This 177-nucleotide RNA was probed chemically with DMS. The reactions ran in a buffer of 150 mM KOAc, 10 mM MgCl2 and 150 mM bicine (pH 8.5), at 24 C. DMS adducts were read by reverse transcription with MarathonRT.
[RMDB]
RNA sequence: GGGAACGACUCGAGUAGAGUCGAAAAUGAAAGAGUUUCCUUUAACCUAUAUGGAAGCAAAGAUCAAGAAUACAACCUUCCCAUAUGGUUGACUUAAUUAUUCCCUUGGUUCCUGGAAGCUAAAAAAAUGGUAUGUGUGUUUCGACACACAUACCAUAAAAGAAACAACAACAACAAC
Reactivity to DMS in 0.01 (KOAc 150mM, MgCl2 10mM, bicine 150mM(pH8.5), 24C), signal-to-noise 1, nucleotides 027 to 126: u040g010a080a170a050g000a060g050u000u000u000c000c040u000u000u000a070a020c040c020u000a090u000a070u000g000g010a010a020g040c270a090a100a100g030a040u030c100a000a060g000a210a170u010a130c090a040a050c180c030u000u000c060c100c050a130u010a020u020g000g000u000u000g000a050c100u000u000a020a030u000u000a060u000u000c000c000c070u000u000g050g000u010u000c050c050u010g000g000a020a030g000c000u030a020a000a030a030a080a060